Conditions: 150 mM KOAc, 10 mM MgCl2 and 150 mM bicine (pH 8.5), 24 C. The record gives the reactivity of an RNA of 207 nucleotides to 2A3.
RNA sequence: GGGAACGACUCGAGUAGAGUCGAAAACCGCGGUGAACAGCACCCGGGCUGUCCAGCCGGCGGGUCCGCGCGAUGCGAUGUGGAUGGUCAUGUCAUCCCCUUCUGGUUACGAAUCAAGUCAGCGUGAGCAGCCGUGAAUCGAACACGGUCAGCGCGGGUACCACAGGGAAUUCGUUCCCUGUGGUACAAAAGAAACAACAACAACAAC
Reactivity to 2A3 in 0.01 (KOAc 150mM, MgCl2 10mM, bicine 150mM(pH8.5), 24C), signal-to-noise 1, nucleotides 027 to 156: c000c010g000c050g050g000u050g000a030a010c000a000g030c020a070c070c050c000g110g110g000c010u010g060u070c040c000a050g040c030c000g170g060c030g000g000g070u020c020c000g000c020g020c010g020a020u030g000c000g030a030u100g070u130g020g000a000u000g020g020u070c100a130u210g040u070c000a000u050c000c000c010c000u100u150c000u010g000g000u030u030a050c100g030a070a120u230c060a130a000g110u020c020a000g030c000g050u060g030a040g010c010a000g010c000c000g030u000g030a040a070u120c150g130a030a020c000a000c010g000g000u000c010a040g000c010g000c040g020g010
2A3 adducts were read by reverse transcription with SuperScript II with manganese.